The data come from the RNA Mapping Database (RMDB), library M2PK90. Structure probing data (DMS) for a 177-nucleotide construct. The DMS profile rests on 1,755 reads. The RNA was probed in 150 mM KOAc, 10 mM MgCl2 and 150 mM bicine (pH 8.5) at 24 C.
RNA sequence: GGGAACGACUCGAGUAGAGUCGAAAAAAUUUCUAGGAAUCUAGCAGGUGGCCAACCGCCCGGGCCACCGUUACUCCACUCCACUCCUAAGGGACUGGUUUGGAGGAACAUAACAGGGCAAAUGAAAUAUCCCUUUAUACUUCGGUAUAAAGGGAUAAAAAGAAACAACAACAACAAC
Reactivity to DMS in 0.01 (KOAc 150mM, MgCl2 10mM, bicine 150mM(pH8.5), 24C), signal-to-noise 3, nucleotides 027 to 126: a040a100u010u010u000c000u000a070g020g010a110a080u020c040u000a040g030c300a110g030g000u000g010g020c010c010a020a070c170c170g000c000c010c020g010g000g000c000c000a000c010c010g000u000u000a020c020u000c000c000a000c010u000c010c000a010c190u000c010c010u000a080a140g010g020g010a000c080u000g000g020u000u000u010g020g010a020g000g000a020a010c020a060u010a090a060c170a040g000g060g040c010a060a080a060u010g010a100a090a120